This 177-nucleotide RNA was probed chemically with DMS and 2A3. For 2A3, 3,562 sequencing reads were counted. Conditions: 150 mM KOAc, 10 mM MgCl2 and 150 mM bicine (pH 8.5), 24 C.
RNA sequence: GGGAACGACUCGAGUAGAGUCGAAAAGAUAUGGAGCGUGAACUACCUCCUCCGUUUGACGUGACUCGGAAACGAGUCACCGAGGGUGGAGGCACGCUCCUAAGUCAAACUUGCGUUCGCGCAAGAAUCAGCUGAAUACGUUCGCGUAUUCAGCUGAAAAAGAAACAACAACAACAAC
Reactivity to DMS in 0.01 (KOAc 150mM, MgCl2 10mM, bicine 150mM(pH8.5), 24C), signal-to-noise 3, nucleotides 027 to 126: g000a070u000a300u000g030g000a020g010c000g000u000g000a060a030c120u060a300c010c000u000c000c000u000c030c000g000u030u000u000g010a220c300g010u010g010a010c010u020c000g000g010a110a080a200c000g010a010g010u000c010a000c000c000g000a110g000g010g000u000g010g020a030g000g000c000a010c000g010c010u000c000c000u000a010a050g010u010c030a140a140a210c000u000u000g000c000g050u000u010c180g030c020g020c000a020a010g010a110a140
Reactivity to 2A3 in 0.01 (KOAc 150mM, MgCl2 10mM, bicine 150mM(pH8.5), 24C), signal-to-noise 2, nucleotides 027 to 126: g030a010u070a040u150g000g010a000g000c010g020u010g020a090a070c060u190a110c300c010u000c000c000u000c030c040g150u090u170u300g120a120c060g010u000g000a000c000u000c020g030g020a010a060a050c000g010a000g000u000c010a010c000c010g010a030g050g040g100u130g000g020a010g000g000c010a000c000g000c000u000c000c000u000a010a000g010u020c000a030a030a090c010u000u010g000c000g030u080u120c300g000c010g000c160a000a010g000a020a180